[RMDB]
RNA sequence: GGGAACGACUCGAGUAGAGUCGAAAAUCAGGACUGUUCGCAGUCCUGAAAACCCAGACCCGAAUCCACCCAUCGACUCUAGGACGGAACCCAGCCAGGGAUAAAGGAGGGUGUUCGCACCCUCCAAGACGUAAACUCUGUUCGCAGAGUUUACGUCAAAAGAAACAACAACAACAAC
Reactivity to 2A3 in 0.01 (KOAc 150mM, MgCl2 10mM, bicine 150mM(pH8.5), 24C), signal-to-noise 1, nucleotides 027 to 126: u030c000a010g000g010a000c010u010g040u060u060c200g020c090a000g000u000c000c000u000g000a000a010a000a000c000c000c010a010g080a040c000c030c030g030a020a030u020c000c000a000c040c000c000a010u010c010g030a030c020u020c010u060a060g030g050a030c010g040g000a060a080c000c010c010a010g060c040c030a060g070g030g000a060u170a070a160a040g000g000a010g000g000g010u000g000u010u050c220g000c040a010c020c000c000u000c000c000a010a000
Reactivity to DMS in 0.01 (KOAc 150mM, MgCl2 10mM, bicine 150mM(pH8.5), 24C), signal-to-noise 3, nucleotides 027 to 126: u000c000a030g010g010a000c000u000g000u000u000c240g040c000a020g000u000c000c000u000g000a000a030a080a200c030c000c010a120g010a100c070c010c020g010a090a050u010c040c020a060c020c030c020a110u010c020g020a040c020u000c020u000a060g000g000a100c110g000g010a130a090c020c010c010a100g000c040c040a060g000g000g000a090u010a060a090a090g010g000a020g020g010g030u000g000u000u000c200g010c020a010c010c000c000u010c000c000a020a040
Chemical mapping of a 177-nucleotide RNA with 2A3 and DMS. The reactions ran in a buffer of 150 mM KOAc, 10 mM MgCl2 and 150 mM bicine (pH 8.5), at 24 C. Values are in units of 0.01, from 0 to 300, in steps of 10. 2A3 adducts were read by reverse transcription with SuperScript II with manganese. For 2A3, 2,479 sequencing reads were counted.